[RMDB]
RNA sequence: GGGAACGACUCGAGUAGAGUCGAAAAAUGCCAUGUUGACCUUGACCCUACUUUCACCAUGGGUGUUCGUGUGUGCGGGGUUUCAGCAAUAGUUAAAGGCCAGCGUAGGGGCCGCACAGGCCGUGGGAAACCGGAUGCAUUUCGAUGCAUCCGGUUUAAAAGAAACAACAACAACAAC
Reactivity to DMS in 0.01 (KOAc 150mM, MgCl2 10mM, bicine 150mM(pH8.5), 24C), signal-to-noise 2, nucleotides 027 to 126: a090u040g000c020c010a110u000g020u000u020g000a070c040c030u000u040g020a110c000c000c000u010a140c090u000u020u010c050a080c040c000a150u040g000g030g030u000g010u000u010c100g020u010g050u000g040u000g000c000g020g020g000g050u010u030u000c050a040g010c120a100a120u000a100g100u020u010a060a090a070g000g000c030c030a030g020c030g000u020a090g000g000g000g000c000c030g040c090a080c060a100g010g010c050c000g000u040g010g020g020
Reactivity to 2A3 in 0.01 (KOAc 150mM, MgCl2 10mM, bicine 150mM(pH8.5), 24C), signal-to-noise 1, nucleotides 027 to 126: a010u080g000c060c000a070u090g000u030u060g050a140c040c030u000u010g030a050c000c030c020u020a060c020u100u070u110c000a000c000c070a200u120g090g090g040u000g080u080u090c050g020u060g000u000g000u000g150c010g000g010g000g000u000u170u060c030a010g030c000a040a110u060a040g060u040u160a260a000a060g000g020c000c110a060g030c010g050u160a110g000g000g050g040c000c000g000c000a070c000a030g050g050c060c000g000u050g000g000g050
The record gives the reactivity of an RNA of 177 nucleotides to DMS and 2A3. The reactions ran in a buffer of 150 mM KOAc, 10 mM MgCl2 and 150 mM bicine (pH 8.5), at 24 C. The data come from the RNA Mapping Database (RMDB), library OK1LIB. Values are in units of 0.01, from 0 to 300, in steps of 10.